[RMDB]
RNA sequence: GGGAACGACUCGAGUAGAGUCGAAAACGUCGGUCCCGGUCAGGAAGCGCACGUCAUAGCCAUCCAGCCGUUUGAACCGGGCGAUCGCGUCGGUGGCGAUGUAUUCGUAGGCGUGACCUACGUGGGGACCGUUGCUCUAUUUCGAUAGAGCAACGGUAAAAGAAACAACAACAACAAC
Reactivity to DMS in 0.01 (KOAc 150mM, MgCl2 10mM, bicine 150mM(pH8.5), 24C), signal-to-noise 3, nucleotides 027 to 126: c100g000u000c040g000g020u010c010c020c010g000g000u000c190a080g010g000a090a180g020c050g030c020a060c070g000u010c030a050u000a110g000c030c020a050u020c020c070a160g010c010c040g010u000u000u000g000a130a190c090c020g000g000g030c060g000a030u010c080g000c060g010u000c150g010g010u000g010g030c010g010a030u000g000u010a120u000u000c030g030u010a110g010g000c030g000u010g010a300c000c000u000a030c040g000u010g020g010g010g010
Reactivity to 2A3 in 0.01 (KOAc 150mM, MgCl2 10mM, bicine 150mM(pH8.5), 24C), signal-to-noise 2, nucleotides 027 to 126: c010g050u020c030g010g020u030c030c000c000g000g100u070c090a010g090g000a050a000g070c000g010c050a030c030g000u010c030a030u020a020g020c000c010a010u080c020c030a000g080c010c010g010u000u060u100g050a070a030c020c020g040g090g000c020g010a040u120c020g000c060g120u090c060g050g050u010g000g010c040g000a040u020g040u050a160u040u130c030g020u060a100g000g130c030g050u030g030a020c010c000u030a010c010g070u110g040g010g030g020
The record gives the reactivity of an RNA of 177 nucleotides to DMS and 2A3. DMS adducts were read by reverse transcription with MarathonRT. The reactions ran in a buffer of 150 mM KOAc, 10 mM MgCl2 and 150 mM bicine (pH 8.5), at 24 C. It was measured as part of the RMDB library OK2TST. Values cover nucleotides 27 to 126. For 2A3, 1,974 sequencing reads were counted.